Conditions: 150 mM KOAc, 10 mM MgCl2 and 150 mM bicine (pH 8.5), 24 C. Structure probing data (2A3 and DMS) for a 177-nucleotide construct. 2A3 adducts were read by reverse transcription with SuperScript II with manganese. It was measured as part of the RMDB libraries RFM100 and RFMREP. DMS adducts were read by reverse transcription with MarathonRT.
[RMDB]
RNA sequence: GGGAACGACUCGAGUAGAGUCGAAAACCCCCAGAAUUGUGGGCUUGCUGCUUUGCAGUGCUGGCGACCUAUUCCCUUUGACGAUCCCUAGGUGGAGAUGGGGCAUGAGGAUCCUCCAGGGGAAUAGGUUUAUGCAUCUAUUCGUAGAUGCAUAAACAAAAGAAACAACAACAACAAC
Reactivity to 2A3 in 0.01 (KOAc 150mM, MgCl2 10mM, bicine 150mM(pH8.5), 24C), signal-to-noise 9, nucleotides 027 to 126: c000c000c000c000c000a010g020a060a060u040u020g010u040g020g020g010c030u050u160g050c100u090g010c010u120u160u300g010c010a010g000u020g040c010u020g000g020c030g020a020c000c000u000a000u000u000c000c000c000u010u000u010g010a010c010g000a000u020c020c000c020u070a120g070g110u110g090g170a210g020a110u240g050g010g030g000c020a040u120g040a110g070g000a000u000c000c000u000c000c030a000g000g000g000g000a000a000u000a000g000
Reactivity to DMS in 0.01 (KOAc 150mM, MgCl2 10mM, bicine 150mM(pH8.5), 24C), signal-to-noise 9, nucleotides 027 to 126: c020c000c010c020c020a030g000a040a030u000u000g020u000g000g000g000c020u010u030g010c170u030g010c010u000u000u030g040c010a020g010u000g010c010u000g000g010c210g010a100c020c000u000a010u000u000c000c000c000u000u000u000g020a030c300g000a010u000c000c000c030u010a090g020g020u010g010g000a090g010a070u020g010g000g000g010c070a070u010g000a120g010g000a020u000c000c070u000c020c060a040g000g000g010g000a020a000u000a000g000